[RMDB]
Conditions: 150 mM KOAc, 10 mM MgCl2 and 150 mM bicine (pH 8.5), 24 C. This 177-nucleotide RNA was probed chemically with 2A3 and DMS. 2A3 adducts were read by reverse transcription with SuperScript II with manganese. DMS adducts were read by reverse transcription with MarathonRT. Source: RMDB library OK2TRN, as collected in RNAgym.

RNA sequence: GGGAACGACUCGAGUAGAGUCGAAAACAUUGGCAUGGUGGCCGCUUCCCCCGUCGCGUCUCGGGUAAAUGGCAAGGUAGACGCUGACGUCGUCGGUCGAUUUGCCACCUGCUGCCGUGCCCUGGGCGGCUGACAGAUCUUUCGAGAUCUGUCAGCCAAAAGAAACAACAACAACAAC
Reactivity to 2A3 in 0.01 (KOAc 150mM, MgCl2 10mM, bicine 150mM(pH8.5), 24C), signal-to-noise 1, nucleotides 027 to 126: c070a040u090u190g030g000c010a040u070g010g000u050g010g010c020c030g040c040u090u030c000c000c020c000c010g020u020c030g000c000g060u030c000u010c010g100g000g130u170a190a220a120u160g140g000c050a020a020g080g030u100a000g030a030c030g030c190u120g010a030c040g010u240c050g050u070c080g030g040u080c040g070a110u080u060u170g000c000c010a000c000c030u030g010c000u000g060c020c000g000u050g000c020c000c000u050g010g030g080c010
Reactivity to DMS in 0.01 (KOAc 150mM, MgCl2 10mM, bicine 150mM(pH8.5), 24C), signal-to-noise 1, nucleotides 027 to 126: c060a100u010u030g000g000c020a050u030g080g010u000g010g010c020c300g000c210u000u010c020c010c020c070c010g060u000c040g000c060g000u000c020u000c100g030g010g000u000a020a090a140u000g000g000c080a110a050g020g070u020a090g000a030c030g020c010u050g010a000c000g020u030c130g030u050c110g000g040u000c070g000a180u000u000u010g030c000c000a030c040c020u000g000c150u020g030c030c010g030u000g030c070c000c050u000g000g000g000c220